[RMDB]
RNA sequence: GGGAACGACUCGAGUAGAGUCGAAAAGAUAUGGAUCAGCGUACAGGGAGAAUUUACAUCGGAAACGAUGUUGAUUCUUUGAUCUGUGAUCUGAUCCUAAGUCAAAAGGGCCUGUUCGCAGGCCCAAGAUGUAACAAAGCUUCGGCUUUGUUACAUCAAAAGAAACAACAACAACAAC
Reactivity to 2A3 in 0.01 (KOAc 150mM, MgCl2 10mM, bicine 150mM(pH8.5), 24C), signal-to-noise 2, nucleotides 027 to 126: g000a010u030a020u080g000g010a010u000c010a000g030c010g110u200a020c000a000g000g020g030a050g010a040a020u030u020u020a030c000a010u000c010g000g060a050a010a010c000g010a010u000g000u000u000g030a010u040u010c000u300u150u060g040a060u020c000u000g040u000g030a130u090c020u000g010a000u000c000c010u010a060a020g050u000c030a020a020a120a190g000g020g000c030c010u030g060u050u070c300g020c150a000g020g000c000c000c000a000a000
Reactivity to DMS in 0.01 (KOAc 150mM, MgCl2 10mM, bicine 150mM(pH8.5), 24C), signal-to-noise 3, nucleotides 027 to 126: g000a020u000a250u020g000g000a010u010c010a000g010c300g010u020a040c010a010g010g000g020a000g010a030a000u000u000u000a000c000a000u000c010g010g000a060a040a100c000g000a010u000g010u000u000g000a000u000u000c000u000u000u020g010a020u000c000u000g000u000g000a110u010c080u000g000a010u000c000c000u000a020a080g000u000c020a070a110a160a160g000g000g000c000c010u010g020u000u000c230g020c020a030g020g010c000c000c000a010a010